[RMDB]
RNA sequence: GGGAACGACUCGAGUAGAGUCGAAAACCUAAGCUUCGGCUUAGGAAAAAGCGUACUACAAGCUAGCGAUUACCACGAGUAGGCUCCCAAAUAGGAGCCUACGAUGAGUGGUUUUCGCUUGGACCUUGUAUCGCAAAAACCCACUUUCGAGUGGGAAACAAUUAGGUAAGUUCGCUUACCUAAUUGUAAAAGAAACAACAACAACAAC
Reactivity to DMS in 0.01 (KOAc 150mM, MgCl2 10mM, bicine 150mM(pH8.5), 24C), signal-to-noise 3, nucleotides 027 to 156: c010c000u000a020a020g000c020u000u000c300g050g010c020u010u010a010g020g020a010a030a070a140a110g000c040g000u010a070c100u000a030c020a020a020g030c030u000a040g020c000g030a020u000u000a030c020c010a010c000g020a190g000u000a010g020g020c010u010c000c010c030a050a220a240u000a080g000g010a030g020c010c000u000a000c000g020a050u000g000a240g030u000g010g010u010u000u000u000c000g030c010u000u000g010g020a090c190c030u010u000g000u010a020u000c020g000c020a030a040a040a070a090c000c000c000a000c010u000u000u000c250g020a030g040u000g000g020g000a010a040
Reactivity to 2A3 in 0.01 (KOAc 150mM, MgCl2 10mM, bicine 150mM(pH8.5), 24C), signal-to-noise 4, nucleotides 027 to 156: c000c000u000a000a000g000c000u020u260c300g130g000c010u010u020a030g000g110a060a030a000a070a020g000c010g030u070a060c040u000a000c040a020a000g020c000u010a010g020c020g000a000u010u010a000c000c030a000c010g000a030g020u000a000g000g010c000u020c010c050c040a180a280a030u260a090g000g010a000g030c000c000u000a000c000g000a050u040g070a020g000u000g000g000u000u000u000u000c000g000c000u010u000g000g030a030c010c000u000u020g000u010a020u290c010g000c000a000a040a050a050a070c020c020c000a010c010u090u090u120c260g070a030g000u000g000g000g020a030a100
Chemical mapping of a 207-nucleotide RNA with DMS and 2A3. Conditions: 150 mM KOAc, 10 mM MgCl2 and 150 mM bicine (pH 8.5), 24 C. For DMS the reverse transcriptase was MarathonRT. DMS (dimethyl sulfate) methylates the pairing face of unpaired adenines and cytosines. 2A3 adducts were read by reverse transcription with SuperScript II with manganese.